[RMDB]
RNA sequence: GGGAACGACUCGAGUAGAGUCGAAAAGAAGGAUGCUGAACAUCUUGAAUAGGAGACGCAGAUCUGCAGGCAUGAUCAUUAUGCUGAUUCCAACAGUGAUGGCGUUCCAUUUAACCACACGUAACGGACAUAUGGAACAAUUCGUUGUUCCAUAUGUAAAAGAAACAACAACAACAAC
Reactivity to DMS in 0.01 (KOAc 150mM, MgCl2 10mM, bicine 150mM(pH8.5), 24C), signal-to-noise 9, nucleotides 027 to 126: g010a130a060g000g000a030u010g000c090u030g000a110a230c030a040u000c020u010u000g000a080a050u030a110g020g010a070g010a060c090g020c020a040g000a110u010c020u000g010c140a130g000g000c240a010u010g000a120u020c170a110u040u040a050u010g000c030u010g000a130u020u020c110c110a080a190c060a030g010u010g000a170u020g000g000c010g000u000u000c020c010a080u020u020u020a090a140c030c020a070c170a040c120g010u020a050a130c150g010g000
Reactivity to 2A3 in 0.01 (KOAc 150mM, MgCl2 10mM, bicine 150mM(pH8.5), 24C), signal-to-noise 9, nucleotides 027 to 126: g120a040a030g050g020a020u080g050c160u170g070a110a050c020a030u020c010u070u090g040a070a040u110a190g030g030a100g010a030c010g000c020a010g010a100u020c020u050g010c060a080g070g000c030a040u060g050a070u120c050a090u100u250a030u110g010c030u030g040a160u150u080c050c020a040a030c010a070g030u030g070a080u110g070g000c000g010u030u020c010c000a010u040u040u060a040a040c030c010a030c020a020c130g130u130a160a020c080g030g040
Source: RMDB library OK1LIB, as collected in RNAgym. The record gives the reactivity of an RNA of 177 nucleotides to DMS and 2A3. 2A3 adducts were read by reverse transcription with SuperScript II with manganese. The RNA was probed in 150 mM KOAc, 10 mM MgCl2 and 150 mM bicine (pH 8.5) at 24 C.